[RMDB]
RNA sequence: GGGAACGACUCGAGUAGAGUCGAAAAGAUAUGGAAUACGAAGCCCAUGGCAAGGCGUGUCGGAAACGACCGCUGAUGACCCAUGAAGGUUAAGUAUUCCUAAGUCAAACUGCGCUUCGGCGCAGAACUUUACGAACGUGUUCGCACGUUCGUAAAGAAAAGAAACAACAACAACAAC
Reactivity to DMS in 0.01 (KOAc 150mM, MgCl2 10mM, bicine 150mM(pH8.5), 24C), signal-to-noise 2, nucleotides 027 to 126: g030a030u020a300u010g000g000a000a000u000a000c000g010a250a150g030c010c000c010a010u000g000g000c020a080a110g030g010c000g010u030g020u000c000g020g000a160a110a150c030g000a010c010c020g000c000u000g000a010u010g000a080c300c000c010a010u000g000a250a060g000g010u000u010a030a270g000u000a000u000u000c000c000u010a060a050g020u000c050a120a100a150c000u000g000c000g040c000u000u030c190g000g000c000g030c000a020g000a030a130
Reactivity to 2A3 in 0.01 (KOAc 150mM, MgCl2 10mM, bicine 150mM(pH8.5), 24C), signal-to-noise 2, nucleotides 027 to 126: g030a000u100a030u160g000g010a000a000u010a020c020g020a070a030g010c000c020c020a020u020g000g000c030a050a290g030g000c060g090u300g020u040c010g020g040a090a090a090c010g020a000c030c000g000c000u010g010a070u060g000a010c000c060c000a000u030g090a230a120g030g000u160u130a070a030g000u010a000u010u000c000c000u010a090a000g000u000c020a060a100a150c020u020g000c010g000c010u020u100c300g150g020c000g000c000a000g000a000a020
This 177-nucleotide RNA was probed chemically with DMS and 2A3. For DMS the reverse transcriptase was MarathonRT.